[RMDB]
RNA sequence: GGGAACGACUCGAGUAGAGUCGAAAAGAACACGUCUCGGGACGACGCUAAACUCGCCCUGGUCGGGAUGGGUUUAACGACCCCUCGGGUUUCCUAGUUCCUAAAACUAGGUGGUGAAGUCAUAUAAAAAACUUCUACACGUUCGCGUGUAGAAGAACACGUCUUAACGGUUCGCCGUUAAGACGUGAAAAGAAACAACAACAACAAC
Reactivity to 2A3 in 0.01 (KOAc 150mM, MgCl2 10mM, bicine 150mM(pH8.5), 24C), signal-to-noise 1, nucleotides 027 to 156: g060a070a010c050a000c060g010u020c000u040c020g020g000g020a130c300g020a010c070g020c180u020a000a010a020c000u000c010g000c040c000c000u040g050g010u030c020g000g000g070a130u100g050g010g020u040u060u040a080a020c050g020a020c000c000c010c000u010c010g020g000g010u000u000u000c000c000u000a010g010u000u070c040c000u060a010a010a000a030c000u000a010g000g000u020g010g010u050g050a060a060g070u070c020a060u110a000u280a160a080a040a000a000a050c000u000u000c000u000a000c000a010c000g030u020u030c230g000c010g070u000g000u000a020g000a000a000g010a010a010
The record gives the reactivity of an RNA of 207 nucleotides to 2A3. For 2A3, 862 sequencing reads were counted. The data come from the RNA Mapping Database (RMDB), library M2RFPK. The RNA was probed in 150 mM KOAc, 10 mM MgCl2 and 150 mM bicine (pH 8.5) at 24 C.